RNA sequence: GGGAACGACUCGAGUAGAGUCGAAAACUAGAUCCUUUCACGCCGGAAAUUGCCAUUCCCGAGGAUGCGCCGUUCCAUGACAACCCGGCAGAUGACCUGCCUUACUACAUCGUGACUAUCCUGGACGGCUGCAAGCGAUAUUCGUAUCGCUUGCAGCAAAAGAAACAACAACAACAAC
Reactivity to DMS in 0.01 (KOAc 150mM, MgCl2 10mM, bicine 150mM(pH8.5), 24C), signal-to-noise 1, nucleotides 027 to 126: c100u000a100g030a110u000c040c040u000u020u000c020a110c080g010c010c090g000g000a070a090a060u000u000g000c070c030a110u000u000c000c010c020g000a040g010g010a050u000g000c110g000c030c000g000u010u000c050c050a040u000g000a090c070a070a110c040c040c020g010g030c000a050g000a190u000g040a090c250c010u000g010c010c020u000u000a060c060u000a090c090a030u010c100g000u000g000a090c060u000a110u000c010c020u000g000g010a050c130g020
Reactivity to 2A3 in 0.01 (KOAc 150mM, MgCl2 10mM, bicine 150mM(pH8.5), 24C), signal-to-noise 1, nucleotides 027 to 126: c000u010a060g030a090u030c000c040u040u140u180c040a010c080g050c020c000g010g140a110a070a070u080u120g000c040c060a040u040u000c050c000c010g010a060g120g030a030u070g030c000g060c020c000g050u040u000c040c030a020u070g000a020c020a050a050c050c040c030g030g000c020a030g010a050u120g080a040c000c000u040g050c010c010u020u040a050c040u040a030c030a090u090c020g020u000g030a000c020u070a020u000c010c000u000g030g020a030c070g070